[RMDB]
RNA sequence: GGGAACGACUCGAGUAGAGUCGAAAAGAUAUGGAGGGAGCGCGCGAAACAUGUAAGUGUCGGAAACGACACACAUGGAGCGUCUCCUAAGUCAAAAACUCGAAUGUUGUUCGCAACAUUCGAGUAAGGAAUAGCCUUUGUUCGCAAAGGCUAUUCCAAAAGAAACAACAACAACAAC
Reactivity to DMS in 0.01 (KOAc 150mM, MgCl2 10mM, bicine 150mM(pH8.5), 24C), signal-to-noise 2, nucleotides 027 to 126: g010a110u000a280u000g000g010a200g000g020g020a120g010c130g020c020g000c000g000a080a050a140c000a000u000g000u000a060a060g010u000g000u000c000g000g010a080a020a180c000g020a000c000a000c000a030c000a000u000g000g000a150g020c000g020u000c000u000c000c000u000a010a070g000u000c040a120a060a040a130a020c000u000c000g020a020a000u000g000u020u000g000u010u000c240g000c000a020a020c000a010u000u000c000g000a010g010u000a000a030
Reactivity to 2A3 in 0.01 (KOAc 150mM, MgCl2 10mM, bicine 150mM(pH8.5), 24C), signal-to-noise 2, nucleotides 027 to 126: g050a040u260a070u210g080g030a150g090g010g000a070g020c120g000c010g000c000g120a160a040a120c020a010u010g000u070a160a300g010u000g000u010c000g000g060a070a050a080c030g000a000c000a000c000a000c000a010u020g010g010a100g010c010g080u050c020u020c020c000u010a070a010g010u050c020a020a020a030a190a130c000u000c010g000a000a000u010g000u030u000g040u050u100c300g000c130a010a010c000a000u010u000c000g040a000g000u010a010a000
The record gives the reactivity of an RNA of 177 nucleotides to DMS and 2A3. For 2A3 the reverse transcriptase was SuperScript II with manganese. Source: RMDB library TTRDEL, as collected in RNAgym. The 2A3 profile rests on 2,849 reads.